Chemical mapping of a 207-nucleotide RNA with 2A3 and DMS. Source: RMDB library M2RFOK, as collected in RNAgym. As a SHAPE reagent, 2A3 marks flexible, mostly unpaired nucleotides at the ribose 2'-OH. For 2A3, 2,022 sequencing reads were counted. Values cover nucleotides 27 to 156.

RNA sequence: GGGAACGACUCGAGUAGAGUCGAAAAUACUUAGUACGCGCGUAGUUGCAGCCAUUCCGGGUGCAGCAACUGACGCGGAAGACUUUUCCCAGAGUGUGCGCUUCAACUGGCGUGCUGAGUAGUGCACGAAUUGCACGUACGUUCGCGUACGUGCAAAACACUCCUUCUUGUUCGCAAGAAGGAGUGUAAAAGAAACAACAACAACAAC
Reactivity to 2A3 in 0.01 (KOAc 150mM, MgCl2 10mM, bicine 150mM(pH8.5), 24C), signal-to-noise 4, nucleotides 027 to 156: u130a010c000u000u000a000g000u000a000c010g000c010g010c020g010u030a000g000u000u000g000c010a020g010c000c010a100u270u150c170c110g180g000g020u100g030c180a120g000c000a030a000c000u070g090a060c010g000c040g010g020a000a010g170a090c040u210u190u060u030c000c000c000a000g000a000g010u100g000u010g000c020g000c040u010u030c100a300a300c170u010g010g020c000g000u010g010c000u010g000a010g010u030a020g000u030g020c010a030c010g030a070a090u070u010g000c010a000c000g000u000a000c000g010u010u080c180g000c010g090u010a000c010g000u000g000c000a000a000a000
Reactivity to DMS in 0.01 (KOAc 150mM, MgCl2 10mM, bicine 150mM(pH8.5), 24C), signal-to-noise 3, nucleotides 027 to 156: u000a050c050u000u000a080g040u000a080c020g040c010g070c010g010u000a080g040u010u000g020c020a300g030c300c010a080u010u000c050c150g000g070g100u010g000c030a300g000c000a020a020c020u000g020a020c050g000c030g070g000a100a080g000a080c130u000u000u000u000c000c010c000a190g020a100g050u010g000u000g000c010g040c020u000u000c070a080a100c120u000g040g000c050g040u000g000c000u000g000a060g000u000a080g070u000g010c030a070c020g010a100a140u000u010g010c000a040c010g010u020a000c030g010u000u010c300g020c020g030u030a000c000g040u010g010c000a000a000a080